[RMDB]
RNA sequence: GGGAACGACUCGAGUAGAGUCGAAAAUUGAUGUUGUUCAGACACACACAAACAUUGGCUACAGAGAAAAAUGCUACUGCUUUAGCUCCAAAAGCAAUAAAUCAUCAAUAUUACCAUUUCAGGAGGUCUCGGAGAUUUAAAAUGCAAAGAACUGGAAUAAUGCCGUAUUAUUCGUAAUACGGCAUUAAAAAGAAACAACAACAACAAC
Reactivity to DMS in 0.01 (KOAc 150mM, MgCl2 10mM, bicine 150mM(pH8.5), 24C), signal-to-noise 2, nucleotides 027 to 156: u010u010g010a120u000g030u000u000g010u000u000c040a100g010a160c080a090c050a020c030a150c050a150a080a110c030a110u010u000g010g040c050u000a100c080a040g000a200g000a030a100a120a100a090u000g010c040u000a060c060u000g020c010u000u000u000a080g030c000u010c020c050a090a040a050a070g000c020a030a050u000a030a060a080u000c040a070u000c050a030a150u000a080u000u010a070c050c020a080u000u000u000c070a070g010g010a100g030g030u000c030u000c030g030g030a080g010a140u000u010u010a020a050a060a150u030g020c020a040a070a110g000a040a120c000u000g000g000a100a130
Reactivity to 2A3 in 0.01 (KOAc 150mM, MgCl2 10mM, bicine 150mM(pH8.5), 24C), signal-to-noise 1, nucleotides 027 to 156: u040u060g020a000u010g010u050u010g020u040u090c040a030g030a100c010a000c000a000c000a020c020a080a100a030c010a080u060u090g060g040c040u120a030c070a050g100a020g020a010a100a000a090a030u080g050c040u080a100c040u000g050c010u090u010u020a040g020c000u030c030c020a030a010a000a000g000c000a070a040u100a070a000a050u210c050a000u000c000a000a100u050a080u110u100a060c000c000a000u000u030u130c030a030g000g060a000g000g030u020c020u030c080g060g000a020g010a000u030u030u130a040a070a040a040u060g040c060a170a000a000g060a110a080c040u000g010g000a150a000
An RNA of 207 nucleotides, treated with DMS and 2A3 and read out base by base.
It was measured as part of the RMDB library OK3TST.
Values cover nucleotides 27 to 156.
The 2A3 profile rests on 455 reads.
Conditions: 150 mM KOAc, 10 mM MgCl2 and 150 mM bicine (pH 8.5), 24 C.